The data come from the RNA Mapping Database (RMDB), library OK2TRN. This 177-nucleotide RNA was probed chemically with 2A3 and DMS. For 2A3, 915 sequencing reads were counted. The RNA was probed in 150 mM KOAc, 10 mM MgCl2 and 150 mM bicine (pH 8.5) at 24 C.

RNA sequence: GGGAACGACUCGAGUAGAGUCGAAAAGACAGUGCUGCGGAGCCAGGAGCCCAGAACACCUCUGCUCCUGAGGAGUUGAGUGGGGAGAGGGGUCAACUGGAGCUGGAGUUCAGUAUGGCCAUGGGCACGAUACUCUCCGGUUCGCCGGAGAGUAUCGAAAAGAAACAACAACAACAAC
Reactivity to 2A3 in 0.01 (KOAc 150mM, MgCl2 10mM, bicine 150mM(pH8.5), 24C), signal-to-noise 1, nucleotides 027 to 126: g050a030c050a050g000u020g000c010u060g060c060g050g010a030g060c000c000a050g010g040a020g100c020c000c020a030g030a040a040c010a030c030c000u010c010u090g060c010u060c000c000u060g070a150g100g000a180g090u090u100g070a040g020u240g090g020g020g040a030g010a020g000g000g020g040u040c000a000a060c030u030g030g040a090g020c000u080g040g070a060g030u010u080c010a010g020u040a140u110g060g000c060c020a120u100g050g020g000c020a000
Reactivity to DMS in 0.01 (KOAc 150mM, MgCl2 10mM, bicine 150mM(pH8.5), 24C), signal-to-noise 1, nucleotides 027 to 126: g000a080c120a120g000u000g000c000u010g010c120g010g000a150g060c040c040a030g010g000a140g010c020c020c010a040g000a120a180c300a180c020c010u000c020u000g010c000u000c000c010u000g010a130g000g020a100g000u000u010g010a090g000u000g000g000g030g000a080g010a050g000g010g000g010u000c040a030a080c010u000g000g010a110g040c040u000g000g000a110g030u010u000c070a060g000u000a110u010g010g010c020c040a150u000g020g000g040c080a150